The record gives the reactivity of an RNA of 177 nucleotides to DMS and 2A3.
The reactions ran in a buffer of 150 mM KOAc, 10 mM MgCl2 and 150 mM bicine (pH 8.5), at 24 C.
The data come from the RNA Mapping Database (RMDB), libraries RFM100 and RFMREP.
[RMDB]
RNA sequence: GGGAACGACUCGAGUAGAGUCGAAAACUCUAUCAGAGGACAAUAUAUUAAAUGGAUUUUUGGAAUUAGGAGUUGGAAUAGGAGCUUGCUCCGUCCACUCCACGCAUCGACCUGGUAUUGCAGUACUAAGGUCAGUUAUUUUCGAAUAACUGACCUUAAAAGAAACAACAACAACAAC
Reactivity to DMS in 0.01 (KOAc 150mM, MgCl2 10mM, bicine 150mM(pH8.5), 24C), signal-to-noise 3, nucleotides 027 to 126: c020u000c040u010a050u000c080a150g020a060g000g000a160c080a040a050u010a030u020a100u020u030a060a060a090u020g000g000a130u000u010u010u000u000g000g000a100a090u020u030a140g000g000a000g010u030u040g020g000a030a050u020a130g020g000a010g000c030u050u010g020c000u000c010c010g030u000c000c000a030c000u000c010c000a040c190g000c110a020u010c070g000a090c020c030u000g010g030u000a050u020u010g010c130a070g000u010a090c110u010
Reactivity to 2A3 in 0.01 (KOAc 150mM, MgCl2 10mM, bicine 150mM(pH8.5), 24C), signal-to-noise 5, nucleotides 027 to 126: c020u000c000u030a030u070c020a010g010a060g090g020a020c040a020a100u160a030u070a070u260u300a080a100a150u140g160g010a100u060u080u040u140u140g140g030a110a100u140u050a190g010g010a000g050u160u080g020g030a100a070u060a300g010g000a010g020c040u100u100g010c000u040c000c020g000u000c000c000a000c000u010c010c000a000c020g060c020a070u090c030g050a080c030c000u010g010g010u030a050u020u090g010c020a000g030u060a040c050u010